[RMDB]
RNA sequence: GGGAACGACUCGAGUAGAGUCGAAAAUCAAGCCGUUUCGACGGCUUGAACACUUUAGAGUCCUGAGGGACUACGAUCCAGAGUACGGGAGGAACUGUAAGGCCUAGCCCUGCUUCGGCAGGGCUAAGGAAUCAGACUCAUUCGUGAGUCUGAUUCCAAAAGAAACAACAACAACAAC
Reactivity to 2A3 in 0.01 (KOAc 150mM, MgCl2 10mM, bicine 150mM(pH8.5), 24C), signal-to-noise 1, nucleotides 027 to 126: u020c000a000a000g030c000c000g010u010u040u190c250g120a030c010g010g030c000u000u010g000a000a000c000a010c020u080u110u220a080g010a020g090u050c010c020u060g070a210g100g010g000a000c010u080a090c100g070a040u000c000c020a030g010a010g140u140a030c050g050g050g000a050g000g060a030a040c070u080g040u170a070a030g060g020c000c020u020a010g000c000c000c010u000g000c000u020u040c110g070g010c010a010g100g000g000c000u000a020a000
Reactivity to DMS in 0.01 (KOAc 150mM, MgCl2 10mM, bicine 150mM(pH8.5), 24C), signal-to-noise 2, nucleotides 027 to 126: u000c000a020a000g010c000c000g020u000u000u000c200g010a020c000g000g000c010u000u000g000a030a060c130a070c130u000u000u010a080g000a090g030u000c010c010u000g000a120g040g010g010a020c030u000a070c070g010a110u000c040c050a150g000a100g010u000a030c080g000g000g010a080g000g000a070a080c060u010g010u010a050a050g010g000c030c020u000a000g000c000c000c000u000g000c010u010u000c220g000g000c000a010g000g000g010c000u000a000a010